[RMDB]
RNA sequence: GGGAACGACUCGAGUAGAGUCGAAAAGAAAUAAAGUCGUAGGUCGUAAGUAUAUCGUAAAUAAGACCGUAAGACGUAAAGCGGGUAAAAGAUAUACGUAACCGCGUAAACAGGUAACUGGUAAGAAGGGAUUUAGUUAGUUCGCUAACUAAAUCCCAAAAGAAACAACAACAACAAC
Reactivity to 2A3 in 0.01 (KOAc 150mM, MgCl2 10mM, bicine 150mM(pH8.5), 24C), signal-to-noise 2, nucleotides 027 to 126: g010a000a100a030u280a010a010a050g170u100c130g100u270a050g000g000u050c080g040u000a020a030g000u000a010u000a020u060c120g070u070a000a180a000u300a260a020g050a000c000c000g000u000a000a100g020a000c000g000u030a020a000a000g010c020g000g000g000u140a000a000a060a140g030a000u000a000u000a030c050g000u100a000a000c010c000g060c080g050u160a000a000a090c060a100g030g020u030a030a030c000u100g020g000u060a060a030g000a030a000
Reactivity to DMS in 0.01 (KOAc 150mM, MgCl2 10mM, bicine 150mM(pH8.5), 24C), signal-to-noise 3, nucleotides 027 to 126: g020a120a060a020u030a090a070a160g010u020c000g010u000a160g000g000u010c040g040u030a170a140g000u000a020u020a010u020c000g070u030a040a060a090u030a080a070g000a040c010c010g000u030a140a260g000a030c070g020u010a070a160a110g000c000g000g000g010u000a110a070a090a070g000a040u010a000u000a000c010g010u010a080a110c010c000g020c000g010u010a020a040a140c100a010g000g010u040a110a080c030u020g020g010u000a030a110g000a110a100
About this RNA: Chemical mapping of a 177-nucleotide RNA with 2A3 and DMS. High DMS reactivity at an A or C suggests that its Watson-Crick edge is free. The data come from the RNA Mapping Database (RMDB), library OK1LIB. The RNA was probed in 150 mM KOAc, 10 mM MgCl2 and 150 mM bicine (pH 8.5) at 24 C. The DMS profile rests on 4,741 reads.